[RMDB]
RNA sequence: GGGAACGACUCGAGUAGAGUCGAAAAGGCGCUCUUGCGGGAAGAGUUGGGAAUGUGUGCCCCUACCAAACGACUCUACCGUAUUGAGGCGCGCAUUCCACAGGUGGAUCGAGGUCCACAUGCACAGAUCGACUAUCGUAUUCGUACGAUAGUCGAUAAAAGAAACAACAACAACAAC
Reactivity to DMS in 0.01 (KOAc 150mM, MgCl2 10mM, bicine 150mM(pH8.5), 24C), signal-to-noise 3, nucleotides 027 to 126: g010g000c040g010c010u000c000u030u040g010c010g000g000g000a140a070g000a030g020u000u000g000g000g020a110a050u030g020u050g000u030g020c000c010c020c040u050a100c100c090a050a080a130c090g000a020c010u000c040u020a160c030c020g010u010a020u030u020g030a120g000g030c000g000c000g000c090a050u000u000c020c030a190c100a030g000g010u010g000g000a010u010c090g040a170g040g000u000c000c000a020c000a010u030g010c200a090c210a140g000
Reactivity to 2A3 in 0.01 (KOAc 150mM, MgCl2 10mM, bicine 150mM(pH8.5), 24C), signal-to-noise 6, nucleotides 027 to 126: g090g000c000g010c000u000c000u020u040g010c010g000g030g030a120a040g010a050g020u020u040g070g030g060a150a180u110g100u030g050u080g140c020c000c000c000u030a050c010c020a110a060a020c030g010a010c000u000c000u040a010c020c010g010u020a090u000u140g040a100g000g030c000g000c000g000c020a030u020u000c010c010a080c030a050g110g000u000g000g010a020u020c070g050a060g140g050u020c000c000a010c000a030u090g060c100a080c010a110g100
Source: RMDB library OK1LIB, as collected in RNAgym. This 177-nucleotide RNA was probed chemically with DMS and 2A3. 2A3 adducts were read by reverse transcription with SuperScript II with manganese. The DMS profile rests on 4,595 reads. Conditions: 150 mM KOAc, 10 mM MgCl2 and 150 mM bicine (pH 8.5), 24 C.